[RMDB]
RNA sequence: GGGAACGACUCGAGUAGAGUCGAAAAUGGAGUAGAGGCUCUGUCUUCGAAACACCAUCGAUCGUCCCUUCUUCUUUACCUUCCUUCGGCUCUUCGAGUGAGACGCGACCGGUGGCACCCCUCCUGGGUUCGCUCUCCACUCCUGCUUUUUGUUCUACUAUAACGAUUGGUUCGCCAAUCGUUAUAGAAAAGAAACAACAACAACAAC
Reactivity to 2A3 in 0.01 (KOAc 150mM, MgCl2 10mM, bicine 150mM(pH8.5), 24C), signal-to-noise 4, nucleotides 027 to 156: u050g010g020a020g000u120a150g080a150g250g110c000u010c030u040g070u010c020u020u000c000g010a040a070a000c030a040c030c010a040u020c000g010a010u030c010g020u040c030c030c000u020u050c030u060u000c010u040u120u080a090c020c000u030u050c020c000u030u020c000g020g000c020u010c000u100u090c040g010a020g010u010g010a020g010a020c070g010c010g010a010c010c000g030g000u040g030g080c110a180c040c070c010c030u040c000c020u060g100g000g020u100u080c030g000c000u000c000u020c030c010a020c020u020c000c010u070g010c080u110u060u030u050u070g030u000u020c010u010a050